An RNA of 207 nucleotides, treated with DMS and 2A3 and read out base by base. 2A3 adducts were read by reverse transcription with SuperScript II with manganese. It was measured as part of the RMDB library OK3TST. Reactivities are given for positions 27 through 156. The reactions ran in a buffer of 150 mM KOAc, 10 mM MgCl2 and 150 mM bicine (pH 8.5), at 24 C.
RNA sequence: GGGAACGACUCGAGUAGAGUCGAAAAGUUAUCGCGAGACAUGCUCUCUGGGCAUCGGAAUUCCUUCAAGAACCUACAAAAAUUACAGUUGUAUCACGAGAGAGUUUCUCCCCGAAUACAGGGAGGAAACCGCCCAUAAUUUCAAGGGAAAGGAAGGACUUCCUCUAACAUUCGUGUUAGAGGAAGUAAAAGAAACAACAACAACAAC
Reactivity to DMS in 0.01 (KOAc 150mM, MgCl2 10mM, bicine 150mM(pH8.5), 24C), signal-to-noise 2, nucleotides 027 to 156: g020u000u010a080u000c010g020c070g010a110g040a060c020a080u000g010c030u000c010u000c100u000g000g000g040c040a030u000c050g000g000a080a170u000u000c000c010u000u000c010a070a130g000a120a190c010c000u000a230c060a050a050a070a040a080u000u020a050c120a160g000u010u020g030u020a070u020c070a060c100g000a050g010a030g010a090g000u020u010u000c020u000c010c000c010c050g000a150a130u000a130c080a080g010g000g020a060g010g000a020a030a000c010c010g000c010c020c010a210u000a010a060u000u000u000c070a070a090g000g020g010a080a110a050g000g000a040a060g010g010
Reactivity to 2A3 in 0.01 (KOAc 150mM, MgCl2 10mM, bicine 150mM(pH8.5), 24C), signal-to-noise 2, nucleotides 027 to 156: g040u070u100a150u220c040g060c050g060a040g040a080c130a100u080g000c010u000c000u000c020u090g030g000g020c000a000u000c010g010g040a040a050u060u060c010c000u020u010c010a070a010g020a140a110c000c010u100a030c160a070a120a030a070a080u210u070a130c050a120g000u070u040g040u100a070u110c040a010c120g060a040g000a000g000a000g060u000u030u000c030u020c000c020c000c020g050a060a010u250a170c060a060g020g020g000a030g010g000a020a010a000c050c010g020c000c000c000a090u180a150a140u150u180u140c100a050a070g010g000g010a070a010a020g050g000a000a000g010g020